[RMDB]
RNA sequence: GGGAACGACUCGAGUAGAGUCGAAAAUAACACUUCUUACGCUCUAGCUGCCUAAAAACCAGCAGGCGUGACCCGAUUUGGAUUGCUCGUGUUCAAUGACAGGUCUUAUUAUUAGCGAGAUACGAUUAAGCCUUGUCUAGCGGCUUGAUAAGAGAUUUCGAAAUGUUAUCUUCGGAUAACAUUUCGAAAAAGAAACAACAACAACAAC
Reactivity to 2A3 in 0.01 (KOAc 150mM, MgCl2 10mM, bicine 150mM(pH8.5), 24C), signal-to-noise 3, nucleotides 027 to 156: u210a060a010c030a020c100u130u150c040u110u110a000c010g010c000u120c010u240a090g000c000u000g000c010c010u040a040a040a000a010a020c010c000a000g000c000a000g000g000c000g000u000g000a000c010c000c010g010a010u000u010u020g010g000a010u020u100g000c000u000c020g000u000g010u010u000c010a020a030u030g020a030c040a050g030g010u020c110u100u180a190u110u070a130u080u220a060g000c010g000a000g010a030u010a030c010g010a010u010u010a010a000g000c000c000u150u150g080u270c080u050a040g120c030g090g000c010u000u010g000a000u010a020a030g050a000g030a080u010u010

Chemical mapping of a 207-nucleotide RNA with 2A3. It was measured as part of the RMDB library ARCHII.